This 207-nucleotide RNA was probed chemically with 2A3. It was measured as part of the RMDB library M2RFPK. For 2A3 the reverse transcriptase was SuperScript II with manganese. For 2A3, 454 sequencing reads were counted. High 2A3 reactivity points to a flexible backbone, as in loops and unpaired stretches.
RNA sequence: GGGAACGACUCGAGUAGAGUCGAAAACAGCAAAAAGGAACCGAUUCCCACCAAGUUCGGAAAGAGAUAACGGGCGAGGCGCUGAAGAAAGAAUCUCGCUUCAGACACCCCAAGGACUCGACUGAAGAAUGCACGCCAUCGUUCGCGAUGGCGUGAACACUAUUCGCAACUUCGGUUGCGAAUAGUGAAAAGAAACAACAACAACAAC
Reactivity to 2A3 in 0.01 (KOAc 150mM, MgCl2 10mM, bicine 150mM(pH8.5), 24C), signal-to-noise 1, nucleotides 027 to 156: c000a000g140c040a010a160a040a000a100g110g050a020a060c080c050g040a030u030u110c070c020c000a000c040c010a110a100g020u060u000c010g040g040a040a110a000g000a000g020a020u050a220a000c000g000g000g030c080g040a030g100g090c150g010c150u050g000a020a010g080a160a300a050g050a120a170u000c110u060c110g050c000u040u060c060a040g010a080c020a090c030c000c000c000a020a050g000g010a040c020u000c030g020a020c090u060g000a020a000g060a100a120u120g070c000a000c060g000c010c000a000u000c000g010u050u030c150g010c000g140a000u030g030g000c000g000u000g000a000a000